Structure probing data (DMS and 2A3) for a 170-nucleotide construct. For DMS the reverse transcriptase was MarathonRT. Conditions: 150 mM KOAc, 10 mM MgCl2 and 150 mM bicine (pH 8.5), 24 C. The DMS profile rests on 5,498 reads. Source: RMDB library 15KLIB, as collected in RNAgym.
RNA sequence: GGGAACGACUCGAGUAGAGUCGAAAAGGAAGGCGUUGUUGGGGGGGAGAUGGGCUUACCUACGGGAAUCCCUGGGUCCCCCUGAUGUCCAGUCCCUCCCCCGUCCGAGAGAAGGGAGACUCCGGAAAAGGUUCGCGGUUCGCCGCGAACAAAAGAAACAACAACAACAAC
Reactivity to DMS in 0.01 (KOAc 150mM, MgCl2 10mM, bicine 150mM(pH8.5), 24C), signal-to-noise 1, nucleotides 027 to 129: g020g020a050a020g030g010c140g030u070u000g000u050u000g010g010g010g000g000g030g090a080g020a100u000g010g030g000c050u000u000a070c000c040u030a000c190g080g030g030a210a000u010c060c020c030u020g000g060g000u010c020c000c020c020c050u010g020a040u050g000u020c030c010a040g000u010c010c060c000u020c000c000c000c020c030g040u050c060c120g020a120g010a020g020a040a080g000g000g000a050g000a120c000u040c030c090g050g000a070a080a040a080g010
Reactivity to 2A3 in 0.01 (KOAc 150mM, MgCl2 10mM, bicine 150mM(pH8.5), 24C), signal-to-noise 2, nucleotides 027 to 129: g050g000a000a000g010g000c010g060u000u060g120u140u130g010g000g000g000g010g060g000a040g000a010u090g000g000g000c040u050u090a170c000c000u040a120c100g020g000g050a050a210u080c000c000c090u050g010g030g010u080c000c000c000c050c020u010g050a050u020g010u010c000c000a060g100u020c010c010c000u030c000c060c000c000c030g100u040c040c000g090a100g000a000g000a070a020g030g010g000a020g000a010c000u010c040c080g000g030a040a000a000a070g100